[RMDB]
RNA sequence: GGGAACGACUCGAGUAGAGUCGAAAACGGUUAACCACCUCAAAGCUACGCGCUAAUGAUAAUAUCUUAUCAGUUAGAUUCACUGCUAACAAAAUUGUUGGUGGUGCUCCUACAUGGUUUAAUGCGUACCCCUUGUUUACUUCGGUAAACAAGGGGUAAAAGAAACAACAACAACAAC
Reactivity to 2A3 in 0.01 (KOAc 150mM, MgCl2 10mM, bicine 150mM(pH8.5), 24C), signal-to-noise 1, nucleotides 027 to 126: c000g010g000u040u040a030a030c040c000a000c040c000u040c030a080a060a020g000c000u030a040c100g090c000g000c020u010a090a070u060g030a010u060a040a050u080a070u120c120u110u030a010u000c010a070g050u020u000a020g030a160u070u100c020a020c040u030g000c020u020a000a030c030a060a080a130a150u250u030g030u010u010g070g000u000g030g000u010g000c000u040c030c000u020a020c010a080u090g070g000u050u060u090a060a040u120g100c050g000u010
An RNA of 177 nucleotides, treated with 2A3 and read out base by base. Values cover nucleotides 27 to 126. The reactions ran in a buffer of 150 mM KOAc, 10 mM MgCl2 and 150 mM bicine (pH 8.5), at 24 C. Reactivities are rounded to 0.1 and cut off at 0 and 3.